[RMDB]
RNA sequence: GGGAACGACUCGAGUAGAGUCGAAAAAGGUGCCCCAUUGACAAAUUGUGUUAAGAUGCUUACUCCUAAAACUGGUACAGGUAUAGCUAUAUCUGUUAAACCAGAGAGUACAGCUGAUCAAGAGACUGCGCCAUGCGGUUCGCCGCAUGGAAAAGAAACAACAACAACAAC
Reactivity to 2A3 in 0.01 (KOAc 150mM, MgCl2 10mM, bicine 150mM(pH8.5), 24C), signal-to-noise 6, nucleotides 027 to 129: a010g100g000u080g040c000c010c000c010a060u050u170g050a030c060a020a180a080u190u120g080u020g060u090u100a110a030g020a040u020g000c010u000u010a000c020u050c040c040u140a100a090a030a030c010u020g000g000u040a010c000a000g000g000u010a010u010a070g160c240u130a010u010a000u000c010u000g020u040u140a090a030a050c000c000a000g020a010g000a000g040u000a020c110a040g030c010u010g010a080u050c020a050a020g040a000g060a120c020u090g040c030g020
Reactivity to DMS in 0.01 (KOAc 150mM, MgCl2 10mM, bicine 150mM(pH8.5), 24C), signal-to-noise 7, nucleotides 027 to 129: a110g040g030u040g010c100c020c030c050a160u000u130g020a090c100a030a080a060u060u010g040u050g000u040u010a070a120g010a050u020g010c040u030u000a070c010u020c000c290u060a050a070a080a170c000u010g050g020u030a050c020a010g030g020u080a020u030a150g050c180u070a080u000a030u050c010u040g070u000u000a070a070a050c010c020a020g010a180g020a000g020u040a020c180a000g070c010u020g010a000u020c100a050a070g000a060g030a070c000u020g030c150g020